[RMDB]
Source: RMDB library OK1LIB, as collected in RNAgym. Chemical mapping of a 177-nucleotide RNA with DMS and 2A3. Conditions: 150 mM KOAc, 10 mM MgCl2 and 150 mM bicine (pH 8.5), 24 C. Reactivities are given for positions 27 through 126. For DMS the reverse transcriptase was MarathonRT. 2A3 adducts were read by reverse transcription with SuperScript II with manganese.

RNA sequence: GGGAACGACUCGAGUAGAGUCGAAAACGGCGGCGCAGACAUCAGCAGAGCGCGCCGGAGCAUCCGAAACCGCCGCGAAGACGUCAGAAACGCAGGCGGCUUCCAGUGCCGGUGAUGCAGGUGCGUCAUGGAUUUACGACUUCGGUCGUAAAUCCAUAAAAGAAACAACAACAACAAC
Reactivity to DMS in 0.01 (KOAc 150mM, MgCl2 10mM, bicine 150mM(pH8.5), 24C), signal-to-noise 1, nucleotides 027 to 126: c030g000g000c060g000g060c000g110c080a130g030a000c070a090u020c220a070g010c100a070g010a270g000c000g000c030g000c050c000g000g100a020g000c040a010u010c020c300g000a000a110a000c080c050g000c000c000g000c010g030a100a030g040a070c020g000u040c090a020g000a050a260a140c140g000c070a060g030g000c000g000g040c020u040u000c000c000a160g000u110g010c160c010g020g000u110g020a010u020g010c150a100g030g010u000g000c020g000u000c050
Reactivity to 2A3 in 0.01 (KOAc 150mM, MgCl2 10mM, bicine 150mM(pH8.5), 24C), signal-to-noise 2, nucleotides 027 to 126: c020g030g030c040g050g050c000g000c030a080g090a210c040a110u120c050a020g100c040a050g030a020g040c030g000c000g000c000c020g000g000a000g000c020a050u040c000c020g000a100a040a010c000c040g000c010c000g050c070g100a020a050g120a040c030g040u160c090a050g110a100a200a010c110g090c060a030g000g000c000g020g000c000u090u020c000c020a040g020u020g190c040c010g010g030u090g010a130u070g000c020a020g000g090u040g000c000g020u030c020